[RMDB]
RNA sequence: GGGAACGACUCGAGUAGAGUCGAAAAGCGUCCUCUCUCCGGGACAUCUAGAGGCGGCGGUAUCCAUGCCUCAACCAGACGAGCCUGACAUCAUCCCCAGUCUGCAGUACCCUGCGAUCGGGGCUGAUCAUGUGGAGUAUUUCGAUACUCCACAUGAAAAAGAAACAACAACAACAAC
Reactivity to DMS in 0.01 (KOAc 150mM, MgCl2 10mM, bicine 150mM(pH8.5), 24C), signal-to-noise 5, nucleotides 027 to 126: g000c160g000u000c010c000u000c070u000c040u010c040c050g020g000g010a050c050a080u000c100u010a120g000a080g010g030c050g000g010c120g000g010u000a070u010c050c040a140u010g020c030c010u000c030a080a080c090c040a060g010a090c050g010a090g010c050c040u000g010a130c170a090u000c020a040u000c010c000c000c010a070g010u000c020u010g030c010a020g010u010a120c260c300c020u000g010c030g000a020u010c060g000g010g000g010c050u000g000a040
Reactivity to 2A3 in 0.01 (KOAc 150mM, MgCl2 10mM, bicine 150mM(pH8.5), 24C), signal-to-noise 3, nucleotides 027 to 126: g050c020g010u020c000c010u000c010u000c000u000c020c020g050g000g020a030c010a060u070c070u120a040g010a040g070g040c050g030g000c080g040g090u140a100u160c040c020a080u140g000c000c000u010c010a030a020c020c030a020g040a100c010g030a050g030c010c030u070g060a050c030a060u030c010a020u040c020c010c010c000a000g030u020c030u200g010c000a000g010u100a250c110c000c020u010g020c000g010a010u030c030g000g010g000g030c020u010g000a030